[RMDB]
Source: RMDB library OK2TRN, as collected in RNAgym. The record gives the reactivity of an RNA of 177 nucleotides to DMS. DMS adducts were read by reverse transcription with MarathonRT. The reactions ran in a buffer of 150 mM KOAc, 10 mM MgCl2 and 150 mM bicine (pH 8.5), at 24 C.

RNA sequence: GGGAACGACUCGAGUAGAGUCGAAAAAGGUCGACCGUCCCUGGAAGUUUCCUCCCCUGGGAUCAACAUGGAAGCUGCAAUGGGUGUCAUCGCAGGGCUGGCAUGUCAGCUGAACCCCUCGCCGCAAGUCUCGCUACGAAUUCGUUCGUAGCGAGACAAAAGAAACAACAACAACAAC
Reactivity to DMS in 0.01 (KOAc 150mM, MgCl2 10mM, bicine 150mM(pH8.5), 24C), signal-to-noise 1, nucleotides 027 to 126: a120g000g020u000c010g020a110c090c050g000u010c030c010c010u000g000g020a140a110g010u000u000u000c020c000u010c040c030c030c020u000g030g000g010a110u000c080a030a100c100a110u000g000g010a030a040g040c040u000g010c070a060a080u000g010g030g020u000g030u000c030a090u000c020g000c060a120g020g010g020c040u020g000g000c070a090u000g000u000c090a060g020c040u030g000a110a090c090c000c020c000u000c070g020c050c030g030c110a040a090